The record gives the reactivity of an RNA of 177 nucleotides to 2A3 and DMS. The 2A3 profile rests on 1,876 reads.
RNA sequence: GGGAACGACUCGAGUAGAGUCGAAAAUGGAUCCGGUACCUAGUCAGGUACCAUGACAUGGCACACUCUGAUCCAUGGUACUACAUGUAGUGCACGAUCAUAUAUGAGGUACUCAUGUGGAUCUCACGGAAAGGACAGGGUUCGCCCUGUCCUUUCCAAAAGAAACAACAACAACAAC
Reactivity to 2A3 in 0.01 (KOAc 150mM, MgCl2 10mM, bicine 150mM(pH8.5), 24C), signal-to-noise 2, nucleotides 027 to 126: u050g010g020a010u010c040c000g000g010u000a000c010c010u090a060g230u270c170a030g070g040u040a040c060c020a020u070g030a010c000a020u060g010g070c050a050c010a020c030u080c040u070g030a060u030c000c020a010u060g050g000u060a050c000u000a010c000a050u090g070u240a020g010u000g010c030a040c110g040a100u190c110a030u010a030u100a070u250g060a110g050g070u000a000c030u030c030a000u040g030u000g010g010a030u020c020u050c010a030c130
Reactivity to DMS in 0.01 (KOAc 150mM, MgCl2 10mM, bicine 150mM(pH8.5), 24C), signal-to-noise 2, nucleotides 027 to 126: u000g000g000a060u000c040c180g020g000u020a020c010c000u000a180g000u000c240a090g020g000u000a020c050c050a040u010g010a060c010a100u010g020g000c070a040c090a080c060u010c010u000g000a010u000c020c070a130u000g010g010u000a130c030u000a090c000a080u000g020u000a000g040u000g010c040a040c150g010a140u010c130a150u000a140u000a080u000g000a100g000g020u000a020c000u010c030a000u000g000u000g000g010a070u000c000u020c050a110c280